RNA sequence: GGGAACGACUCGAGUAGAGUCGAAAACUCUCCGAGACCGAUAGUGAACAAGUAGUGUGAACGAACGCUGAAAAGCACCCCACAAAGGGGGGUGAAAUAGGGCUUGAAAUCAGGUGGCGAUGGAGCGAAAUAAAAUUUGGUUCGCCAAAUUUUAUUUAAAAGAAACAACAACAACAAC
Reactivity to DMS in 0.01 (KOAc 150mM, MgCl2 10mM, bicine 150mM(pH8.5), 24C), signal-to-noise 9, nucleotides 027 to 126: c050u000c010u010c020c030g010a120g010a110c050c030g010a090u020a060g020u000g000a120a100c070a050a070g010u010a050g010u010g010u020g010a140a080c100g000a080a080c100g010c010u000g000a080a070a120a120g000c010a050c000c000c000c000a080c130a090a110a170g020g010g010g010g010g010u000g000a020a020a060u020a110g000g000g010c010u000u000g010a050a060a090u010c060a050g000g020u010g000g000c040g000a100u010g000g010a050g010c100g000
Reactivity to 2A3 in 0.01 (KOAc 150mM, MgCl2 10mM, bicine 150mM(pH8.5), 24C), signal-to-noise 6, nucleotides 027 to 126: c010u000c010u000c010c010g040a030g040a120c010c010g050a060u050a090g140u080g050a110a050c020a080a020g040u060a020g030u040g030u040g120a050a040c090g030a020a010c020g010c040u030g010a050a040a000a010g030c000a000c000c010c010c000a090c090a070a170a040g100g050g000g000g000g010u010g010a000a010a000u110a010g040g030g010c010u010u030g040a060a050a050u070c030a010g060g010u020g010g020c030g020a020u060g020g020a020g030c040g040